[RMDB]
RNA sequence: GGGAACGACUCGAGUAGAGUCGAAAAGGCUAAUUGCCGCCGUUCUGCGCUACGCGGUUUGCCCCCUGUCGAUCGCACAUAUUGCUUCGACGGGUUCUCCCGCUGCGCCUUCGCCGCUGAGACCGGGUCUGUCCGAUGAAUUCGUUCAUCGGACAGAAAAAGAAACAACAACAACAAC
Reactivity to 2A3 in 0.01 (KOAc 150mM, MgCl2 10mM, bicine 150mM(pH8.5), 24C), signal-to-noise 2, nucleotides 027 to 126: g020g010c020u040a180a090u200u230g000c020c000g030c070c020g020u070u000c050u120g000c000g000c030u040a020c040g000c010g000g060u040u090u150g000c010c000c000c000c040u000g020u010c000g020a040u080c110g080c160a010c010a160u300a120u130u280g000c000u020u010c000g000a010c020g000g000g000u010u040c020u000c000c000c010g000c020u020g010c000g000c000c010u050u110c050g010c010c000g020c040u050g020a010g020a100c000c000g030g000g020
Reactivity to DMS in 0.01 (KOAc 150mM, MgCl2 10mM, bicine 150mM(pH8.5), 24C), signal-to-noise 3, nucleotides 027 to 126: g020g010c010u010a100a100u010u000g020c030c030g000c060c100g000u010u010c040u010g030c030g040c020u000a030c110g010c010g010g000u000u010u010g020c050c040c150c020c000u000g010u000c000g020a010u010c300g000c000a050c300a150u010a140u000u000g010c000u000u000c000g000a010c000g010g000g000u000u010c090u000c020c010c030g020c030u010g000c030g010c030c150u000u000c070g010c020c020g010c040u000g000a140g010a100c130c010g000g000g020